[RMDB]
RNA sequence: GGGAACGACUCGAGUAGAGUCGAAAAGAUAUGGAGAUUGUAAGGAAGCUGUAGAUGGUCGGAAACGACCAUCCGAAGGAACUACUUCUAUCAAUCUCCUAAGUCAAAAGAUACCUUCGGGUAUCAAGGUUGUAACAUGGUUCGCCAUGUUACAACCAAAAGAAACAACAACAACAAC
Reactivity to DMS in 0.01 (KOAc 150mM, MgCl2 10mM, bicine 150mM(pH8.5), 24C), signal-to-noise 1, nucleotides 027 to 126: g000a080u000a300u000g010g000a010g000a040u000u000g010u010a100a300g010g000a010a000g010c030u000g000u000a130g040a000u000g020g000u010c000g020g000a100a050a170c020g000a000c010c000a000u000c040c040g030a090a110g000g040a130a090c150u000a170c010u000u000c010u000a250u020c000a000a000u000c000u000c020c000u010a010a140g000u000c020a050a030a110a100g000a020u000a010c010c000u000u010c130g010g010g040u000a000u000c000a070a040
Reactivity to 2A3 in 0.01 (KOAc 150mM, MgCl2 10mM, bicine 150mM(pH8.5), 24C), signal-to-noise 1, nucleotides 027 to 126: g010a030u030a030u090g020g000a000g000a000u000u050g030u130a300a300g070g020a030a040g040c140u100g040u010a000g010a000u000g000g010u040c000g000g020a030a040a000c010g010a010c000c020a000u000c000c010g010a050a030g050g080a150a010c040u170a080c000u060u000c020u010a090u040c000a000a000u000c000u060c000c010u010a060a010g020u010c000a080a040a060a080g010a000u000a000c000c000u020u070c280g080g000g000u000a010u020c020a000a000